Description:
The record gives the reactivity of an RNA of 177 nucleotides to 2A3 and DMS. For DMS, 674 sequencing reads were counted. Source: RMDB library OK2TST, as collected in RNAgym.

RNA sequence: GGGAACGACUCGAGUAGAGUCGAAAAUGGCGUCUUCGGUAUUGAUUUGUGCGUAGCCAGGUUCAUCAGCCAGCGCCGCCAGUGCCGCACAGUUACCGGUCAUCGAACGGCAAGAGUAGUGACCAAACACGAGGAUCGAUUUCGAUCGAUCCUCGUGAAAAGAAACAACAACAACAAC
Reactivity to 2A3 in 0.01 (KOAc 150mM, MgCl2 10mM, bicine 150mM(pH8.5), 24C), signal-to-noise 1, nucleotides 027 to 126: u090g050g050c020g060u090c150u130u130c110g020g010u110a140u050u130g170a090u150u080u180g050u080g010c040g040u060a050g030c000c010a000g010g040u090u070c030a100u000c040a080g110c050c010a000g000c000g000c060c010g020c010c000a040g000u020g090c000c000g000c010a080c010a020g000u020u010a060c030c060g080g010u070c030a080u070c000g040a090a140c040g030g040c020a020a040g020a010g060u040a020g010u010g050a040c000c000a000a010a010
Reactivity to DMS in 0.01 (KOAc 150mM, MgCl2 10mM, bicine 150mM(pH8.5), 24C), signal-to-noise 1, nucleotides 027 to 126: u020g010g010c060g010u000c060u010u010c120g030g080u000a020u000u040g010a100u010u000u000g030u010g000c070g040u000a090g080c040c060a070g020g010u000u030c070a070u000c170a150g010c010c030a060g000c130g010c100c050g000c070c050a030g010u000g010c080c010g040c030a060c040a010g030u000u000a130c070c000g030g010u000c120a060u000c090g040a010a030c090g010g000c060a060a190g010a060g010u000a110g030u020g040a220c010c030a040a040a230
Conditions: 150 mM KOAc, 10 mM MgCl2 and 150 mM bicine (pH 8.5), 24 C.
DMS adducts were read by reverse transcription with MarathonRT.